Chemical mapping of a 207-nucleotide RNA with 2A3. 2A3 adducts were read by reverse transcription with SuperScript II with manganese. It was measured as part of the RMDB library M2RFPK. The reactions ran in a buffer of 150 mM KOAc, 10 mM MgCl2 and 150 mM bicine (pH 8.5), at 24 C. The 2A3 profile rests on 698 reads.

[RMDB]
RNA sequence: GGGAACGACUCGAGUAGAGUCGAAAAGAAAGAAAGAAAGAAGCCGGCUCUGCUAGUUUCACGGCAACCACGUUGAAAUUACAACGAAAGAAGCUCGCGCUCAACUUCAACGGCUUAACGAGUGCAAAAAAGAAGUAUCACUUCGGUGAUACUUCAACGUUCAAUUGUUCUUCGGAACAAUUGAACGAAAAGAAACAACAACAACAAC
Reactivity to 2A3 in 0.01 (KOAc 150mM, MgCl2 10mM, bicine 150mM(pH8.5), 24C), signal-to-noise 1, nucleotides 027 to 156: g080a030a070a020g020a060a080a020g050a010a070a030g050a090a010g060c030c050g050g020c010u000c040u060g000c010u010a000g000u040u030u100c100a070c030g030g000c030a030a150c020c020a040c010g000u010u010g090a100a150a150u160u110a120c000a000a000c010g010a050a000a060g020a040a000g030c130u180c210g020c010g030c000u000c000a030a050c020u090u050c020a030a000c030g000g000c000u060u030a050a000c050g010a030g000u000g000c000a000a090a000a000a000a080g010a000a000g000u010a000u010c000a010c000u030u070c200g050g000u000g000a000u000a000c020u000u010c000a000a000